[RMDB]
RNA sequence: GGGAACGACUCGAGUAGAGUCGAAAAUUGGGGAGCUAGGAGUCAGAGUGGGUGUGACUCGUGUGUGUUUGGCAGCUGCUCGUUGAGAACCUUGAAAGUCGAGGCUCCCAGUCAGAAUUUUAGGUACCCAAAUACAAGUAUUCGUACUUGUAUUUGGAAAAGAAACAACAACAACAAC
Reactivity to DMS in 0.01 (KOAc 150mM, MgCl2 10mM, bicine 150mM(pH8.5), 24C), signal-to-noise 9, nucleotides 027 to 126: u010u000g010g020g010g010a070g020c010u000a050g010g010a160g020u000c030a100g000a060g030u000g000g010g010u000g020u000g000a040c020u000c030g010u010g020u010g020u000g010u000u000u000g010g020c020a040g000c010u000g010c020u000c030g010u010u000g010a140g000a110a080c020c020u000u010g010a100a100a160g010u010c050g010a150g010g000c010u000c000c000c010a080g010u000c120a130g010a080a070u000u000u000u010a090g010g010u010a130c170
Reactivity to 2A3 in 0.01 (KOAc 150mM, MgCl2 10mM, bicine 150mM(pH8.5), 24C), signal-to-noise 6, nucleotides 027 to 126: u100u080g030g000g000g010a020g010c020u020a020g030g060a050g080u060c040a020g030a010g040u050g000g030g100u020g000u030g080a020c010u010c070g040u130g030u060g010u010g020u080u040u060g060g000c010a070g050c020u020g000c010u000c020g050u050u080g060a040g010a100a040c010c010u030u060g090a120a040a030g080u110c040g020a060g090g000c000u000c000c060c000a000g000u020c000a010g040a210a140u110u110u120u120a110g100g000u100a100c000

Source information:
The record gives the reactivity of an RNA of 177 nucleotides to DMS and 2A3. Conditions: 150 mM KOAc, 10 mM MgCl2 and 150 mM bicine (pH 8.5), 24 C. The data come from the RNA Mapping Database (RMDB), library OK2TRN. 2A3 adducts were read by reverse transcription with SuperScript II with manganese. For DMS, 26,979 sequencing reads were counted. DMS adducts were read by reverse transcription with MarathonRT.